[RMDB]
RNA sequence: GGGAACGACUCGAGUAGAGUCGAAAAGGAGAAGCGAAGUGAUGAGCAUUACUAGCUGGAGCCCCAAAGAGGCACGUGUGUGUGUGUGUGUGUGUAUCUGUAUCCUUGUCUGUGCAUGCACACGUGUGCUAACGGAGAAGUUCGCUUCUCCGUUAGCAAAAGAAACAACAACAACAAC
Reactivity to DMS in 0.01 (KOAc 150mM, MgCl2 10mM, bicine 150mM(pH8.5), 24C), signal-to-noise 3, nucleotides 027 to 126: g010g010a070g010a040a040g000c020g010a060a100g000u010g000a100u010g020a120g020c070a090u010u000a040c080u020a220g000c030u010g000g010a150g000c110c010c010c060a030a120a080g010a110g000g020c000a030c000g000u000g000u000g000u010g000u010g000u010g000u010g000u010g030u000g020u000g000u010a040u030c100u000g010u010a080u000c020c000u010u020g000u010c090u030g030u020g010c020a020u010g000c040a010c000a000c010g020u000g000u020
Reactivity to 2A3 in 0.01 (KOAc 150mM, MgCl2 10mM, bicine 150mM(pH8.5), 24C), signal-to-noise 4, nucleotides 027 to 126: g140g010a080g030a070a020g000c030g020a050a000g010u030g050a070u080g070a030g060c060a030u010u110a060c050u030a020g020c010u030g020g050a050g070c000c010c000c010a010a130a020g170a070g030g000c000a000c000g000u000g000u000g000u000g000u000g000u000g000u000g000u000g000u020g010u040g030u010a080u110c040u060g110u050a060u090c040c000u090u100g090u070c050u040g050u030g000c000a000u000g000c000a000c010a000c020g000u000g010u010
The record gives the reactivity of an RNA of 177 nucleotides to DMS and 2A3. The RNA was probed in 150 mM KOAc, 10 mM MgCl2 and 150 mM bicine (pH 8.5) at 24 C. Reactivities are given for positions 27 through 126. Values are in units of 0.01, from 0 to 300, in steps of 10. For DMS the reverse transcriptase was MarathonRT. High DMS reactivity at an A or C suggests that its Watson-Crick edge is free.